[RMDB]
RNA sequence: GGGAACGACUCGAGUAGAGUCGAAAACUCAAUCACUACGGUGAUUGAGAAUGCUUACGCCUCAAUGAAGCUUGAGUCGAGUGCCUCGAGCAGAUAUAGACUGAAACAUUUAGUAUGGUCAAGCAGGGAGCAACAGCUCGAGUACGCUCGAGCUGAACUAAUCGUAGCGAUUCGUCGCUACGAUUAGAAAAGAAACAACAACAACAAC
Reactivity to 2A3 in 0.01 (KOAc 150mM, MgCl2 10mM, bicine 150mM(pH8.5), 24C), signal-to-noise 4, nucleotides 027 to 156: c000u000c000a000a000u000c010a000c010u040a040c210g140g010u000g000a010u000u000g000a000g000a010a030u100g000c000u040u030a050c030g030c010c030u040c050a100a240u210g100a210a050g030c000u020u010g010a020g000u020c030g030a040g110u130g050c030c020u020c030g030a010g020c000a010g070a040u180a020u090a080g080a030c040u050g030a060a090a020c030a060u080u150u090a090g020u060a080u130g040g010u020c010a000a020g010c010a030g070g000g000a040g020c020a000a080c000a020g010c000u000c010g000a000g000u030a030c260g010c040u000c000g000a000g000c000u010g020a020a020
Reactivity to DMS in 0.01 (KOAc 150mM, MgCl2 10mM, bicine 150mM(pH8.5), 24C), signal-to-noise 2, nucleotides 027 to 156: c010u000c000a000a010u010c030a010c000u000a080c260g160g070u000g010a030u000u020g000a000g000a080a070u000g020c070u000u010a160c050g040c020c060u030c070a110a170u000g000a250a180g000c030u000u000g000a070g020u000c020g010a190g030u010g030c100c010u010c050g030a110g010c020a100g030a130u010a130u000a140g000a150c010u000g010a240a110a060c090a140u000u010u000a150g110u010a060u030g020g020u010c050a070a090g010c050a140g000g000g010a190g000c040a070a110c010a060g010c000u000c000g010a040g030u000a090c300g020c020u000c000g000a050g000c000u000g010a030a120